[RMDB]
RNA sequence: GGGAACGACUCGAGUAGAGUCGAAAAGACCAUCAGUAAGCUACCUCUGGCAGCACCUGAAGGCUACAUCAUCCGUAUUCAGGGUGAGACCAACAGCUCAGCCGAUGAGUAUUUCGUGAAGUAUGACAGUUGUUCGGGAGUUCGCUCCCGAACAACUAAAAGAAACAACAACAACAAC
Reactivity to 2A3 in 0.01 (KOAc 150mM, MgCl2 10mM, bicine 150mM(pH8.5), 24C), signal-to-noise 1, nucleotides 027 to 126: g000a000c000c000a250u150c000a000g000u160a020a010g000c040u120a000c000c060u100c030u120g120g000c000a000g000c120a060c000c090u010g000a120a000g010g000c100u040a000c000a030u100c000a000u010c000c070g010u010a300u130u160c010a060g100g000g000u000g000a000g030a000c000c000a030a150c000a000g100c000u030c000a000g160c060c000g040a090u030g000a060g040u120a100u000u150u000c000g010u030g120a170a080g200u160a170u090g290a000c150
The record gives the reactivity of an RNA of 177 nucleotides to 2A3. It was measured as part of the RMDB library OK1LIB.